[RMDB]
RNA sequence: GGGAACGACUCGAGUAGAGUCGAAAAUAUGUCAUUUGGUGUGCGUACAUCAGGUGGCACAACUUUCUCUAUGUCGCCACAUAGUGGAAGUGAUCUCAGUGCUGUACGCACAGUUCUGAGAGACCUUUGCUACUGUAGCGACAGUGGUAAAGAAGUAGAGUAAUAGUGGAUUCGUCCACUAUUACUCAAAAGAAACAACAACAACAAC
Reactivity to 2A3 in 0.01 (KOAc 150mM, MgCl2 10mM, bicine 150mM(pH8.5), 24C), signal-to-noise 9, nucleotides 027 to 156: u290a050u040g010u010c010a010u020u010u010g010g000u010g010u060g140c230g110u240a020c000a000u010c010a000g030g000u010g000g020c010a010c020a030a070c010u040u080u040c030u000c010u030a060u060g000u000c020g010c030c000a010c000a010u010a010g020u060g150g030a010a010g020u060g110a050u010c000u000c010a010g000u010g020c000u010g020u070a100c130g010c110a010c010a010g000u020u030c000u000g010a010g000a010g010a050c010c000u010u010u010g000c000u010a050c150u020g000u010a010g020c000g030a010c000a000g000u030g040g000u140a100a080a050g060a070a040g060u150a030
Reactivity to DMS in 0.01 (KOAc 150mM, MgCl2 10mM, bicine 150mM(pH8.5), 24C), signal-to-noise 3, nucleotides 027 to 156: u010a050u000g010u000c010a020u000u010u000g010g000u000g030u000g040c300g030u010a070c000a030u000c020a040g010g030u000g010g000c010a030c040a050a070c050u000u000u000c030u010c020u000a100u010g010u010c070g000c070c050a130c010a040u000a030g010u000g050g010a030a040g020u000g000a170u000c010u000c010a050g010u000g020c030u000g000u000a130c300g000c230a110c010a000g000u000u000c000u010g020a050g010a060g010a160c300c010u010u000u000g010c000u000a030c080u000g040u000a060g020c050g010a070c000a000g010u000g010g000u000a030a050a060g010a090a060g010u010a090

The data come from the RNA Mapping Database (RMDB), library OK3TST. Structure probing data (2A3 and DMS) for a 207-nucleotide construct. The DMS profile rests on 10,042 reads. For 2A3, 15,231 sequencing reads were counted. Reactivities are given for positions 27 through 156.